[RMDB]
RNA sequence: GGGAACGACUCGAGUAGAGUCGAAAAGGUGUUGGAGCUACGAACAUUGAACCACCAAUUUGGGUACUCAAAGCGAUAGCCGUCAAAGUCGAGGGUAGCUUGGAGGUCGCUGAUGGCGGUUGCGUACCUUCACGUAUGUGUUCGCACAUACGUGAAGAAAAGAAACAACAACAACAAC
Reactivity to 2A3 in 0.01 (KOAc 150mM, MgCl2 10mM, bicine 150mM(pH8.5), 24C), signal-to-noise 3, nucleotides 027 to 126: g030g000u040g040u060u050g060g020a050g030c030u060a020c060g040a090a020c040a070u010u130g040a050a030c000c030a020c020c030a040a020u110u130u130g090g030g030u060a060c010u010c060a100a050a010g000c010g100a100u120a050g010c050c000g070u020c050a140a070a070g040u110c030g050a030g070g040g040u000a030g030c000u020u060g140g010a050g070g000u030c010g020c090u040g010a070u070g040g010c030g010g010u080u080g000c030g000u020a060c000
Reactivity to DMS in 0.01 (KOAc 150mM, MgCl2 10mM, bicine 150mM(pH8.5), 24C), signal-to-noise 4, nucleotides 027 to 126: g010g020u000g020u010u000g020g000a140g010c040u000a040c050g000a060a060c100a070u000u000g010a110a220c070c050a080c100c080a080a110u000u010u010g010g020g000u000a060c060u000c090a040a070a130g000c040g020a090u010a080g000c020c010g010u000c040a070a100a130g000u000c090g010a090g000g000g020u000a080g010c020u000u000g010g000a090g010g010u000c020g010c050u000g010a110u000g010g010c030g010g020u000u000g010c080g000u010a060c110